[RMDB]
RNA sequence: GGGAACGACUCGAGUAGAGUCGAAAAUGAGGUUGGAGUGCAAGAGACAUUGUCCACCUACAAUGUAUAUAAAUCAUUUGAGAAAAAAGGGAAAGAGAAAAACAAACCCAUCCUAACAAAAACAACUGAUGAGCAAGAAACAGUGAAUCAAUUCACAUCAUAGUGUUAGCUUCGGCUAACACUAUGAAAAAGAAACAACAACAACAAC
Reactivity to DMS in 0.01 (KOAc 150mM, MgCl2 10mM, bicine 150mM(pH8.5), 24C), signal-to-noise 1, nucleotides 027 to 156: u000g010a090g040g030u000u010g030g000a130g040u000g020c090a130a120g000a240g000a060c040a110u000u010g000u000c050c070a110c060c060u000a080c010a010a100u000g040u000a140u000a140u010a090a020a180u000c040a080u000u000u010g020a190g000a000a060a090a060a160a140g050g000g010a050a050a100g000a090g010a040a030a130a080a110c030a030a040a070c010c000c000a040u000c020c110u000a050a170c060a060a060a030a070a060c010a130a020c000u000g000a010u010g000a030g000c040a000a100g010a100a020a070c020a070g010u010g000a070a140u000c070a060a110u020u000c150a040c050a200
Reactivity to 2A3 in 0.01 (KOAc 150mM, MgCl2 10mM, bicine 150mM(pH8.5), 24C), signal-to-noise 2, nucleotides 027 to 156: u120g010a010g000g000u070u100g030g010a060g010u070g030c010a070a030g080a020g010a080c020a040u030u080g020u030c000c010a030c010c010u010a040c010a040a020u050g060u080a070u020a070u070a230a130a020u100c020a050u020u130u160g060a100g050a010a090a020a040a050a020g000g020g020a050a080a010g050a030g050a110a080a020a000a000c000a020a060a030c000c020c000a010u030c000c000u110a070a030c020a030a070a160a000a000c020a020a050c080u050g020a040u050g030a070g130c080a070a020g050a080a090a030c020a020g020u020g040a000a040u090c040a060a120u110u020c000a010c000a050